[RMDB]
RNA sequence: GGGAACGACUCGAGUAGAGUCGAAAAGCGCUGUAGUCCAGUUCGCUGACCUCCGGCGCCACCUUGAGAGCGAUGCGGCGGUUGUUCAUCACCGUCGGGGUGAGGGUCAGGCGGAUGCCGAACUCCACUACCAGCAGUAUUUCGAUACUGCUGGUAGAAAAGAAACAACAACAACAAC
Reactivity to 2A3 in 0.01 (KOAc 150mM, MgCl2 10mM, bicine 150mM(pH8.5), 24C), signal-to-noise 3, nucleotides 027 to 126: g020c000g000c030u040g030u140a030g050u010c070c030a010g010u060u100c050g050c030u010g030a070c000c010u010c040c000g000g030c020g060c010c000a050c030c000u150u160g150a150g000a020g090c070g060a080u170g060c040g030g000c010g000g060u050u130g050u070u190c120a170u130c010a040c000c000g040u030c030g010g010g000g010u090g040a160g030g050g000u030c010a010g040g000c030g080g030a050u150g070c030c010g020a040a040c010u040c060c000a060
Reactivity to DMS in 0.01 (KOAc 150mM, MgCl2 10mM, bicine 150mM(pH8.5), 24C), signal-to-noise 4, nucleotides 027 to 126: g020c060g030c020u000g010u010a090g000u000c090c040a090g010u000u000c110g020c020u010g010a140c050c010u000c090c020g000g000c010g010c010c050a060c030c020u010u010g010a100g000a100g010c040g030a100u000g010c050g010g000c030g000g020u010u010g030u000u010c130a130u000c040a030c010c020g000u000c040g030g010g020g010u010g000a130g000g000g010u000c050a100g000g000c030g010g000a080u000g030c040c030g010a080a090c060u000c040c060a230